The record gives the reactivity of an RNA of 177 nucleotides to DMS and 2A3.
The data come from the RNA Mapping Database (RMDB), library 15KREP.
Reactivities are given for positions 27 through 126.
The 2A3 profile rests on 4,637 reads.
For DMS, 1,806 sequencing reads were counted.
RNA sequence: GGGAACGACUCGAGUAGAGUCGAAAAUUGCAUUGACCCACUGCUCGAGGACUCCUUCUCUUCCCGCUCGGGAUUUCUUCGUCUCGGACCGGCUCAUCUUCGGCAAAGGGCGGCGGUCCUCAGUGCUCUAUGGUUAUAACUUCGGUUAUAACCAUAGAAAAGAAACAACAACAACAAC
Reactivity to DMS in 0.01 (KOAc 150mM, MgCl2 10mM, bicine 150mM(pH8.5), 24C), signal-to-noise 1, nucleotides 027 to 126: u000u010g010c170a200u000u010g000a090c020c010c070a080c060u000g000c020u000c040g020a030g000g010a140c130u010c070c030u000u010c060u000c030u000u000c010c010c020g010c030u000c060g010g010g010a080u000u000u000c050u000u010c100g000u000c010u010c040g010g000a090c050c020g000g000c070u000c090a180u000c060u000u000c040g000g010c070a090a080a170g000g010g020c080g020g010c090g000g000u000c010c000u000c160a030g020u000g000c100u020
Reactivity to 2A3 in 0.01 (KOAc 150mM, MgCl2 10mM, bicine 150mM(pH8.5), 24C), signal-to-noise 3, nucleotides 027 to 126: u120u140g040c030a010u020u080g010a020c030c000c030a060c030u000g010c010u000c020g010a010g010g040a100c030u040c000c000u090u030c030u000c000u050u030c000c010c010g040c060u060c070g000g000g050a030u050u090u040c040u050u070c040g060u030c020u000c040g090g010a140c010c010g040g020c040u020c050a170u020c060u140u090c020g080g010c040a080a050a060g030g000g000c010g040g030c010g000g000u020c000c000u010c030a030g020u020g030c010u000